The record gives the reactivity of an RNA of 177 nucleotides to DMS and 2A3. It was measured as part of the RMDB library OK2TST. The RNA was probed in 150 mM KOAc, 10 mM MgCl2 and 150 mM bicine (pH 8.5) at 24 C. The 2A3 profile rests on 1,316 reads.
RNA sequence: GGGAACGACUCGAGUAGAGUCGAAAAGGUGAGGCCUAUCCAGGAGACGAUGUUGCAUCCUACAUGAGUGGGGCGUCAAAGGUGGACCUCUCACGACUCCACGCUCACGUGCUCGAAGAGAAGAUGCGCUGAGCUGAUUGUUCGCAAUCAGCUCAGCAAAAGAAACAACAACAACAAC
Reactivity to DMS in 0.01 (KOAc 150mM, MgCl2 10mM, bicine 150mM(pH8.5), 24C), signal-to-noise 1, nucleotides 027 to 126: g010g000u000g030a070g010g020c000c020u010a040u030c020c090a190g000g050a300g020a020c020g000a180u000g010u000u010g020c110a190u010c010c000u020a080c050a130u000g010a130g080u010g000g000g010g010c010g000u000c020a070a110a110g000g020u000g000g000a050c050c020u000c010u000c010a080c080g000a030c020u000c000c080a100c040g020c010u010c030a110c010g000u000g000c000u000c000g000a100a040g010a070g000a080a080g010a030u010g000c140
Reactivity to 2A3 in 0.01 (KOAc 150mM, MgCl2 10mM, bicine 150mM(pH8.5), 24C), signal-to-noise 1, nucleotides 027 to 126: g190g010u040g000a020g010g000c000c000u040a040u090c040c020a130g090g040a060g020a020c030g010a050u140g080u300u140g040c070a110u050c010c010u000a050c040a120u300g040a150g120u000g010g000g000g000c000g000u040c000a020a000a030g000g010u040g010g000a080c000c010u000c000u000c000a040c000g010a000c000u000c020c010a090c100g020c000u010c000a020c050g020u060g060c000u000c010g100a110a070g040a010g000a220a010g080a070u140g050c000